[RMDB]
RNA sequence: GGGAACGACUCGAGUAGAGUCGAAAACGUCGACGCACGCCGUCCAGACCGCCGCGGGGAAGAACGCGGGCUCGUCGGGGUCGACCAGCUCGGCCAGCCGGGCGCCGACGGAGGUGUCCGCACCGGCGAGCACUCGGAGGUUCGCCUCCGAGUGCUCAAAAGAAACAACAACAACAAC
Reactivity to DMS in 0.01 (KOAc 150mM, MgCl2 10mM, bicine 150mM(pH8.5), 24C), signal-to-noise 2, nucleotides 027 to 126: c150g000u000c030g000a020c040g010c060a080c130g000c110c020g000u060c000c070a110g050a100c040c140g010c000c030g030c000g000g000g020g000a200a080g090a130a120c090g020c030g000g010g000c020u030c040g020u000c000g000g000g000g000u020c000g000a060c000c070a160g010c090u000c000g000g000c000c000a130g060c100c000g000g000g030c000g000c030c010g000a190c180g000g000a180g000g000u000g020u000c000c030g020c000a300c010c010g010g050c040
Reactivity to 2A3 in 0.01 (KOAc 150mM, MgCl2 10mM, bicine 150mM(pH8.5), 24C), signal-to-noise 2, nucleotides 027 to 126: c050g060u010c010g020a020c000g020c070a040c130g040c060c000g010u020c040c000a020g010a060c000c040g060c010c020g030c030g030g020g010g060a120a060g040a110a030c020g000c000g050g000g030c020u030c030g020u010c000g000g000g060g000u020c000g000a010c030c000a010g010c040u040c030g020g010c000c030a050g070c080c000g010g000g000c010g020c000c000g090a150c100g080g040a110g050g010u020g030u000c010c000g010c000a010c000c000g020g020c040